[RMDB]
RNA sequence: GGGAACGACUCGAGUAGAGUCGAAAAAGUGCGAAAGAAACCAGGUUUCUGUCUUACUGGGAAAGAAAGUACGAGAAGAACUACGUUGUUUCGAGAAAGACAGAAAUUCACUCGAUUCAGCGUAGAAGGGUUUACUUAUGUUCGCAUAAGUAAACCCAAAAGAAACAACAACAACAAC
Reactivity to 2A3 in 0.01 (KOAc 150mM, MgCl2 10mM, bicine 150mM(pH8.5), 24C), signal-to-noise 4, nucleotides 027 to 126: a000g080u060g020c000g030a120a090a070g140a100a090a020c010c000a000g010g000u050u020u010c000u000g010u000c010u020u000a060c010u030g010g000g090a090a130a040g160a000a110a010g040u090a030c150g050a000g070a150a070g070a200a100c010u000a000c010g000u010u010g000u000u000u010c010g000a000g040a000a020a010g000a000c000a000g060a060a020a010u230u230c080a070c100u000c000g010a000u000u000c000a010g000c000g000u020a000g000a000a050
Reactivity to DMS in 0.01 (KOAc 150mM, MgCl2 10mM, bicine 150mM(pH8.5), 24C), signal-to-noise 3, nucleotides 027 to 126: a140g010u000g000c020g000a050a080a050g010a160a070a110c000c010a040g000g030u000u000u000c010u000g000u010c000u000u000a070c000u000g000g000g000a120a090a130g010a100a080a140g010u000a010c050g030a110g010a110a110g000a100a120c010u000a000c000g040u000u000g010u000u000u000c000g020a000g000a260a010a000g010a010c050a030g010a060a130a110u010u030c220a130c000u000c000g010a010u000u000c010a010g030c000g020u010a010g000a080a070

Chemical mapping of a 177-nucleotide RNA with 2A3 and DMS.
The RNA was probed in 150 mM KOAc, 10 mM MgCl2 and 150 mM bicine (pH 8.5) at 24 C.
Source: RMDB library OK1LIB, as collected in RNAgym.